[RMDB]
RNA sequence: GGGAACGACUCGAGUAGAGUCGAAAAAGUCCAGUAGUUUGAGACUAGCCUGGGCAAUAUAGGGAGACCCCAUCUCCAAAAAAAUAAUUAAAAGGCAGUCUGUGAUCCCAGCUACUUGGCAGGCUGACUGUAAAAGUGAAUUCGUUCACUUUUACAGAAAAGAAACAACAACAACAAC
Reactivity to DMS in 0.01 (KOAc 150mM, MgCl2 10mM, bicine 150mM(pH8.5), 24C), signal-to-noise 4, nucleotides 027 to 126: a110g020u000c010c010a040g010u000a020g010u000u000u010g010a100g020a030c010u000a070g020c120c000u000g010g020g010c090a090a070u000a090u000a120g010g000g010a030g000a050c090c040c020c050a170u000c010u000c000c020a000a000a030a140a140a060a090u020a060a080u010u020a040a060a090a110g000g000c020a020g020u000c020u000g020u010g000a110u000c030c020c020a130g020c030u000a050c060u000u000g010g000c010a060g000g000c050u000g000a180
Reactivity to 2A3 in 0.01 (KOAc 150mM, MgCl2 10mM, bicine 150mM(pH8.5), 24C), signal-to-noise 1, nucleotides 027 to 126: a000g020u020c020c000a010g010u020a000g000u010u120u300g170a070g010a010c010u040a050g030c000c000u000g000g000g010c020a070a000u130a030u080a080g060g020g010a000g020a030c020c050c000c010a010u020c000u000c000c000a020a020a030a030a020a000a090u180a040a040u100u070a060a100a020a010g050g000c010a010g020u000c000u010g060u060g030a120u080c040c000c000a000g010c010u010a030c010u070u090g020g000c000a000g030g000c050u060g050a070